An RNA of 177 nucleotides, treated with DMS and read out base by base.
Conditions: 150 mM KOAc, 10 mM MgCl2 and 150 mM bicine (pH 8.5), 24 C.
Values cover nucleotides 27 to 126.
RNA sequence: GGGAACGACUCGAGUAGAGUCGAAAAGAUAUGGACACUUGGGAGCUAACGCUAAACUUGGACCAUAGAGAAUCGGAAACGAUUCUCUAUGCUAGUUUAGGUUAGCGAAGAACAAGUGUCCUAAGUCCACACUCCGUGAGUUCGCUCACGGAGUGUGAAAAGAAACAACAACAACAAC
Reactivity to DMS in 0.01 (KOAc 150mM, MgCl2 10mM, bicine 150mM(pH8.5), 24C), signal-to-noise 1, nucleotides 027 to 126: g020a180u000a300u010g000g010a020c000a030c000u000u000g020g000g000a110g000c010u010a000a010c000g090c000u010a000a000a000c000u000u020g010g030a200c300c010a030u000a000g000a020g040a010a050u000c000g050g000a180a060a220c000g050a010u020u000c000u000c000u000a000u000g000c060u000a000g010u010u000u000a030g000g040u000u000a000g010c000g010a080a140g020a070a150c010a000a000g010u000g000u000c010c000u010a040a090g010u000c000